[RMDB]
Structure probing data (DMS and 2A3) for a 177-nucleotide construct. The RNA was probed in 150 mM KOAc, 10 mM MgCl2 and 150 mM bicine (pH 8.5) at 24 C.
RNA sequence: GGGAACGACUCGAGUAGAGUCGAAAAGAUAUGGAGGCAUAUGGUUCAACAGCAUGAGGAUCGGAAACGAUCCCAUGACAUGAACCAUGCCUCCUAAGUCAAACCGUAAGAGUUCGCUCUUACGGAAGUUAAUAUCCCCGUUCGCGGGGAUAUUAACAAAAGAAACAACAACAACAAC
Reactivity to DMS in 0.01 (KOAc 150mM, MgCl2 10mM, bicine 150mM(pH8.5), 24C), signal-to-noise 3, nucleotides 027 to 126: g010a020u000a100u010g000g010a010g020g010c000a020u000a100u020g040g010u010u000c000a130a080c260a130g020c000a010u000g000a220g030g010a010u000c000g040g000a030a010a050c000g000a010u000c000c000c000a000u000g000a030c030a200u010g010a000a010c010c000a020u000g000c010c000u000c010c010u000a000a030g010u010c000a160a100a220c000c000g020u000a010a010g010a020g030u010u020c300g000c010u010c000u000u000a020c000g000g000a020a020
Reactivity to 2A3 in 0.01 (KOAc 150mM, MgCl2 10mM, bicine 150mM(pH8.5), 24C), signal-to-noise 5, nucleotides 027 to 126: g000a000u030a020u060g000g010a000g010g010c040a020u140a260u300g040g050u040u000c130a300a220c100a300g030c000a000u010g020a200g180g000a010u000c000g020g000a010a010a000c000g010a010u000c000c020c000a010u000g020a010c020a270u300g010a010a000c000c000a000u000g000c010c000u010c000c000u010a000a010g000u010c020a010a030a110c010c000g000u000a010a000g010a020g040u130u240c300g050c160u000c000u030u010a020c010g020g000a020a000
The DMS profile rests on 3,992 reads.